This 177-nucleotide RNA was probed chemically with DMS and 2A3. 2A3 adducts were read by reverse transcription with SuperScript II with manganese. DMS adducts were read by reverse transcription with MarathonRT. Source: RMDB library 15KREP, as collected in RNAgym. The 2A3 profile rests on 2,059 reads.
RNA sequence: GGGAACGACUCGAGUAGAGUCGAAAAUUCAUUGAGUGUGGAAGUUGUGGUAAUGAUUCCUGGCUUACAGGGAAUGCUAUCCAAGGGUUUGCCUGUGGAUGUGGGGCAUCAUAUACAGCUAAUGAUGGCGAAUAAUAGAGUUCGCUCUAUUAUUCGCAAAAGAAACAACAACAACAAC
Reactivity to DMS in 0.01 (KOAc 150mM, MgCl2 10mM, bicine 150mM(pH8.5), 24C), signal-to-noise 3, nucleotides 027 to 126: u010u010c040a070u010u000g010a070g020u010g030u010g000g010a090a090g030u010u010g020u000g010g000u000a060a070u010g000a090u000u000c020c000u010g010g010c120u010u000a070c050a060g000g000g000a020a020u000g010c060u000a060u000c130c120a080a080g000g000g000u000u010u010g020c040c020u000g020u010g010g010a060u010g010u000g010g000g000g000c060a020u000c020a010u000a100u000a070c090a070g000c070u000a040a050u000g000a070u000g000
Reactivity to 2A3 in 0.01 (KOAc 150mM, MgCl2 10mM, bicine 150mM(pH8.5), 24C), signal-to-noise 2, nucleotides 027 to 126: u050u020c020a020u020u080g050a010g110u080g010u060g030g030a060a040g020u030u020g020u040g060g020u020a050a060u060g070a030u010u020c000c000u010g050g010c050u050u070a040c030a030g000g000g020a050a050u050g080c010u040a040u090c030c030a030a040g070g010g020u060u120u070g170c000c000u050g050u060g090g030a070u050g010u050g030g010g000g000c020a000u000c000a000u000a010u000a030c060a020g000c040u050a080a020u070g050a010u080g080